[RMDB]
RNA sequence: GGGAACGACUCGAGUAGAGUCGAAAACAUUGCAGCUUCGGCUGCAAUGAAUCUGUGGUCUCUACGACUCUACUCGAUAGAGGCUGGAGUAGUCGUUCCCGAUGGCGCCCCAAUUCGUUGGGGCGAAAGGAUUAGAAUCUUUCGAGAUUCUAAUCCUAAAAGAAACAACAACAACAAC
Reactivity to DMS in 0.01 (KOAc 150mM, MgCl2 10mM, bicine 150mM(pH8.5), 24C), signal-to-noise 1, nucleotides 027 to 126: c010a040u000u000g010c000a000g000c000u000u020c200g030g010c000u000g000c010a010a000u000g020a040a070u010c150u000g010u010g060g020u000c030u000c040u000a180c030g020a010c010u000c010u000a000c010u000c000g000a110u000a020g000a030g010g000c020u000g010g000a130g060u000a010g000u000c000g000u000u000c000c000c000g050a010u010g000g000c010g000c000c000c000c000a020a050u000u010c180g030u000u000g000g000g010g000c000g000a000a020
Reactivity to 2A3 in 0.01 (KOAc 150mM, MgCl2 10mM, bicine 150mM(pH8.5), 24C), signal-to-noise 2, nucleotides 027 to 126: c010a000u000u000g000c000a010g000c020u040u100c230g150g010c020u000g020c000a000a000u000g000a000a050u050c070u100g130u090g100g030u040c020u030c020u100a040c030g020a000c000u000c000u000a000c000u000c000g010a010u020a010g030a010g020g000c030u070g060g200a200g090u120a010g000u000c000g000u000u000c000c000c000g000a000u010g060g110c030g000c000c000c000c000a000a020u040u020c110g050u050u020g000g000g010g010c020g000a000a000